[RMDB]
RNA sequence: GGGAACGACUCGAGUAGAGUCGAAAACUCGUGCGUUUCGCCGUGGGCGAUCAGCGAGCCAUCUUUCAUGAUGCCGAUUUUGUCCGCCAGGGUCAGCGCUUCGGUCUGAUCGUGGGUGACGUAGAGAGCGGCAUCGCGUGUUCGCACGCGAUGCCGCAAAAGAAACAACAACAACAAC
Reactivity to 2A3 in 0.01 (KOAc 150mM, MgCl2 10mM, bicine 150mM(pH8.5), 24C), signal-to-noise 1, nucleotides 027 to 126: c010u000c010g050u010g050c100g000u040u140u090c070g020c050c040g070u180g030g060g080c040g000a100u020c040a090g000c020g030a000g010c040c000a030u030c020u000u300u110c130a100u300g000a000u000g000c000c040g100a080u000u000u000u300g000u000c010c000g000c000c030a000g010g050g000u050c000a000g060c040g000c000u090u130c060g110g000u040c000u020g020a040u000c030g130u090g070g000g070u080g000a040c040g040u060a130g040a040g000a000
An RNA of 177 nucleotides, treated with 2A3 and read out base by base. Conditions: 150 mM KOAc, 10 mM MgCl2 and 150 mM bicine (pH 8.5), 24 C. For 2A3, 441 sequencing reads were counted.